RNA sequence: GGGAACGACUCGAGUAGAGUCGAAAAGUAUUGGUCAGCAGUAUUGCUAGCUUGAAAUUCUAGAAACUUGAUUUAGAACUAAGGCUGCCAAGGCAGAACCCUUAGGAUUUAGACAGGUAGCCUAGAUUAGGCGUGAGAACAGGUGUGAGGCAGCAGAAGUAAUUUAGCAGUUCGCUGCUAAAUUACUAAAAGAAACAACAACAACAAC
Reactivity to DMS in 0.01 (KOAc 150mM, MgCl2 10mM, bicine 150mM(pH8.5), 24C), signal-to-noise 1, nucleotides 027 to 156: g020u000a080u000u020g050g050u000c030a010g030c020a000g030u010a070u000u000g000c020u020a150g030c050u010u000g010a130a050a140u000u000c010u000a050g020a090a100a070c060u020u000g010a150u000u010u000a030g010a030a110c000u010a070a020g020g020c000u000g030c010c030a110a090g100g000c040a140g010a040a220c300c000c000u000u000a010g000g030a050u000u000u000a110g020a060c000a070g020g010u000a060g000c080c000u000a010g010a040u000u000a100g020g030c090g050u010g000a110g000a080a100c110a050g000g010u020g030u000g010a080g030g010c060a080g000c120a060g020a080
Reactivity to 2A3 in 0.01 (KOAc 150mM, MgCl2 10mM, bicine 150mM(pH8.5), 24C), signal-to-noise 1, nucleotides 027 to 156: g090u060a020u130u180g040g010u080c050a010g000c010a000g030u130a100u090u100g000c010u050a060g030c020u010u010g060a080a190a130u160u000c020u020a010g010a040a160a010c000u050u020g050a140u130u070u020a060g010a040a020c010u000a060a000g030g000c000u020g000c030c010a040a070g060g000c000a010g000a090a090c010c000c000u000u030a000g030g030a120u090u060u010a010g000a000c020a010g000g030u020a010g030c020c000u010a010g000a060u040u090a060g020g000c050g030u040g020a020g000a030a030c040a050g050g040u070g000u010g040a060g040g000c050a020g010c000a010g040a050